RNA sequence: GGGAACGACUCGAGUAGAGUCGAAAACCCACUAGUGAAACUGGUUCAAUCCCAGUAUCGCGCACCACGAUUGACCUGCGGUUUCAUCCACAAAAUCUGGGCUGCGUGAACUAAAUGUGAACUGACUGCACUCUAUGUGGUUCGCCACAUAGAGUGCAAAAGAAACAACAACAACAAC
Reactivity to 2A3 in 0.01 (KOAc 150mM, MgCl2 10mM, bicine 150mM(pH8.5), 24C), signal-to-noise 2, nucleotides 027 to 126: c000c000c010a000c030u050a030g030u120g130a050a030a000c030u010g000g070u060u080c030a010a070u020c060c000c000a010g060u000a140u040c000g000c000g000c000a000c000c000a060c080g040a000u040u010g070a100c000c000u060g000c090g010g060u080u200u160c110a210u080c010c000a030c040a010a130a010a000u020c020u040g000g010g110c160u020g020c000g000u000g000a000a010c000u020a000a080a150u100g040u060g080a050a110c010u000g070a000c000u030

An RNA of 177 nucleotides, treated with 2A3 and read out base by base.
The RNA was probed in 150 mM KOAc, 10 mM MgCl2 and 150 mM bicine (pH 8.5) at 24 C.
The data come from the RNA Mapping Database (RMDB), library RFM100.